[RMDB]
RNA sequence: GGGAACGACUCGAGUAGAGUCGAAAAACGACAUGCGAUGAUCCUGAUCCUAGACAUGCACAUGUACGAUCCACGUACUAGGUACUCUACUCUCACUAGCUCGGAUCCAUGGAUCGUAUAUAUGAUCGACAUUGUCCCGUUUCGACGGGACAAUGUCAAAAGAAACAACAACAACAAC
Reactivity to 2A3 in 0.01 (KOAc 150mM, MgCl2 10mM, bicine 150mM(pH8.5), 24C), signal-to-noise 3, nucleotides 027 to 126: a000c110g040a050c010a040u090g030c060g140a090u100g030a090u090c010c050u100g010a090u030c000c030u060a050g050a080c030a070u080g020c060a050c000a130u050g010u010a000c010g000a040u020c040c010a130c100g040u020a110c030u020a020g070g010u050a030c000u020c010u050a030c020u030c010u000c070a100c190u070a020g040c060u030c030g040g010a130u000c050c020a030u080g010g000a010u020c020g040u030a020u010a000u000a010u040g120a110u090c050
Reactivity to DMS in 0.01 (KOAc 150mM, MgCl2 10mM, bicine 150mM(pH8.5), 24C), signal-to-noise 2, nucleotides 027 to 126: a100c080g020a110c060a040u000g000c120g030a060u020g010a050u010c020c040u000g010a090u000c020c030u000a070g000a040c040a130u000g010c060a110c160a030u000g010u010a030c020g000a040u000c000c020a040c160g030u000a110c010u010a080g000g000u000a050c110u000c030u000a030c040u010c050u010c130a150c130u000a010g020c080u000c010g000g010a060u000c110c080a200u000g000g030a000u000c000g000u010a030u000a060u000a080u000g010a100u000c050
Conditions: 150 mM KOAc, 10 mM MgCl2 and 150 mM bicine (pH 8.5), 24 C.
Chemical mapping of a 177-nucleotide RNA with 2A3 and DMS.
Source: RMDB library OK2TRN, as collected in RNAgym.
As a SHAPE reagent, 2A3 marks flexible, mostly unpaired nucleotides at the ribose 2'-OH.